[RMDB]
RNA sequence: GGGAACGACUCGAGUAGAGUCGAAAAGGAAAGCGCGCGAAUUGGAAACCAGGGCGCCAUAUUACGCGCGCAAGGAAUUGGGCCUUGGUUUUUUGGAAGGAUUAGAUAAUUAGCCGGCGCCCGUCAACUAUUAUGCUGAAUUCGUUCAGCAUAAUAGAAAAGAAACAACAACAACAAC
Reactivity to 2A3 in 0.01 (KOAc 150mM, MgCl2 10mM, bicine 150mM(pH8.5), 24C), signal-to-noise 1, nucleotides 027 to 126: g050g000a140a020a000g020c020g010c010g020c010g030a040a040u110u090g080g090a090a080a080c090c050a140g010g040g020c040g010c000c010a020u130a070u110u190a060c030g000c000g000c000g000c000a000a000g020g020a100a090u110u130g020g020g000c000c000u030u050g040g000u040u020u000u000u070u040g000g010a040a030g010g070a020u050u090a050g030a050u100a100a100u180u080a010g050c040c000g000g000c000g010c030c000c000g030u050c000a000a020
Reactivity to DMS in 0.01 (KOAc 150mM, MgCl2 10mM, bicine 150mM(pH8.5), 24C), signal-to-noise 4, nucleotides 027 to 126: g010g000a110a160a180g000c030g020c020g040c010g020a120a090u010u010g020g000a060a090a070c080c080a060g000g010g000c070g020c000c010a040u010a040u000u000a100c000g010c030g010c020g020c010a030a050g000g010a080a090u010u010g010g020g000c010c010u010u000g010g000u000u000u010u000u010u010g010g000a120a080g000g000a110u000u010a070g000a150u010a040a050u010u010a090g020c040c040g000g000c100g010c030c010c010g020u000c060a050a150
The record gives the reactivity of an RNA of 177 nucleotides to 2A3 and DMS. For DMS the reverse transcriptase was MarathonRT. The RNA was probed in 150 mM KOAc, 10 mM MgCl2 and 150 mM bicine (pH 8.5) at 24 C. For 2A3 the reverse transcriptase was SuperScript II with manganese. It was measured as part of the RMDB library M2PK90.